This 177-nucleotide RNA was probed chemically with DMS and 2A3.
RNA sequence: GGGAACGACUCGAGUAGAGUCGAAAAUAGAUUGAAACCUGUGAUUGUCCUGAGGGUCAGUCAGGAGCUUCCUCCAUCAGGACGCCCGUGCCUGCCUGCAUGGCUUACACAGGCUCAUCAGCCAUGGACGUAUACGCAGGUUCGCCUGCGUAUACGUAAAAGAAACAACAACAACAAC
Reactivity to DMS in 0.01 (KOAc 150mM, MgCl2 10mM, bicine 150mM(pH8.5), 24C), signal-to-noise 3, nucleotides 027 to 126: u010a100g000a060u010u010g030a020a100a140c000c010u000g000u000g010a300u010u000g010u020c000c010u000g010a300g000g000g000u000c030a000g010u000c010a020g010g010a050g000c030u000u000c010c010u000c090c260a100u020c180a030g010g000a020c050g000c010c010c020g000u000g000c050c030u000g000c030c010u000g010c100a090u000g010g000c020u000u010a150c020a020c020a030g040g010c120u000c030a040u000c050a150g000c040c020a140u000g020g000
Reactivity to 2A3 in 0.01 (KOAc 150mM, MgCl2 10mM, bicine 150mM(pH8.5), 24C), signal-to-noise 2, nucleotides 027 to 126: u070a020g060a030u000u180g010a070a060a030c010c000u000g010u000g050a210u040u110g050u120c000c000u020g010a060g030g020g000u200c050a000g010u010c020a010g040g050a090g000c000u010u030c000c010u060c080c040a270u130c060a050g000g010a010c010g020c010c000c000g090u020g000c010c000u000g000c000c000u020g010c040a030u060g000g040c020u020u070a020c010a000c000a010g030g000c020u020c010a050u020c010a000g050c030c010a040u100g120g060

Conditions: 150 mM KOAc, 10 mM MgCl2 and 150 mM bicine (pH 8.5), 24 C.